Conditions: 150 mM KOAc, 10 mM MgCl2 and 150 mM bicine (pH 8.5), 24 C.
Structure probing data (DMS and 2A3) for a 177-nucleotide construct.
For 2A3 the reverse transcriptase was SuperScript II with manganese.
RNA sequence: GGGAACGACUCGAGUAGAGUCGAAAAGCGAUGAUGCAUUGGUGGUUUUGGACAGAAAUAACAAAGAGUGCACAGUUGCCCAAGCUCUAGGCAACGGGGACAAAUUUAGAGCUACUGACAUGCGUGAACCGCAUCAUGGAUUCGUCCAUGAUGCGGUAAAAGAAACAACAACAACAAC
Reactivity to DMS in 0.01 (KOAc 150mM, MgCl2 10mM, bicine 150mM(pH8.5), 24C), signal-to-noise 2, nucleotides 027 to 126: g020c070g010a070u020g020a060u000g010c040a060u000u000g010g000u000g030g020u000u000u020u010g010g020a100c080a070g000a070a040a090u010a080a090c060a030a120a080g010a080g010u000g000c040a030c070a160g030u000u000g000c010c010c160a050a080g020c040u000c010u010a020g010g000c020a000a030c070g000g000g000g020a110c190a010a070a050u010u000u000a020g020a010g020c000u000a130c220u000g000a070c070a060u020g020c080g000u000g010a130
Reactivity to 2A3 in 0.01 (KOAc 150mM, MgCl2 10mM, bicine 150mM(pH8.5), 24C), signal-to-noise 2, nucleotides 027 to 126: g050c040g050a100u070g040a050u090g020c060a060u000u130g010g030u060g020g110u050u040u080u110g040g000a010c030a050g100a110a140a020u100a060a030c020a020a080a000g080a030g030u090g030c020a020c030a020g040u020u020g000c010c000c020a040a030g030c000u000c000u000a040g000g020c020a010a010c080g050g000g040g000a040c050a040a080a010u070u110u000a030g000a000g040c000u010a020c010u010g060a030c010a110u180g000c110g060u080g020a020
For DMS, 1,604 sequencing reads were counted. Source: RMDB library OK2TRN, as collected in RNAgym.